[RMDB]
Annotation
Conditions: 150 mM KOAc, 10 mM MgCl2 and 150 mM bicine (pH 8.5), 24 C. Structure probing data (2A3 and DMS) for a 207-nucleotide construct. For 2A3, 1,663 sequencing reads were counted.
RNA sequence: GGGAACGACUCGAGUAGAGUCGAAAAUAAUCUUAGCACUUUCGGAGGCUGAGGGAGGUAGAUUGCCUGAGCUCAGGAGUUUGAGACCAGCCUGGGCAACACGGUGAAACCCCAUCUGUACUAAAAUACAAAAAUUAGCUGGAUGUGGCAGCGUGCGCUUUAAGUACGGGUUCGCCCGUACUUAAAGAAAAGAAACAACAACAACAAC
Reactivity to 2A3 in 0.01 (KOAc 150mM, MgCl2 10mM, bicine 150mM(pH8.5), 24C), signal-to-noise 3, nucleotides 027 to 156: u090a010a060u040c030u060u110a040g030c050a090c140u070u150u190c180g080g040a020g080g000c030u030g020a030g040g020g020a060g050g000u090a020g030a150u070u130g040c010c010u010g000a000g020c000u020c030a010g010g000a020g040u060u170u210g070a070g070a020c030c000a010g050c000c000u000g000g000g000c010a010a010c030a000c070g020g010u020g010a080a030a030c000c010c000c010a010u040c040u050g060u030a040c030u080a030a000a030a060u120a020c080a020a060a070a030a090u100u050a060g010c050u030g020g020a050u030g010u060g020g000c000a000g010c000g070u020g050c050g000
Reactivity to DMS in 0.01 (KOAc 150mM, MgCl2 10mM, bicine 150mM(pH8.5), 24C), signal-to-noise 1, nucleotides 027 to 156: u000a070a050u000c050u000u000a080g020c030a000c080u000u010u000c100g020g020a090g020g000c030u010g010a050g040g000g000a110g010g020u000a080g010a140u000u000g010c010c010u000g020a140g030c010u010c020a040g040g000a130g010u010u010u010g000a150g000a060c020c030a040g020c010c000u000g010g000g040c000a070a040c070a060c060g000g010u000g010a040a060a090c010c010c010c020a040u000c010u010g010u000a100c020u010a040a000a070a110u020a160c050a000a030a070a070a180u000u000a040g010c030u010g010g000a070u010g010u000g040g030c040a050g010c050g010u000g030c020g000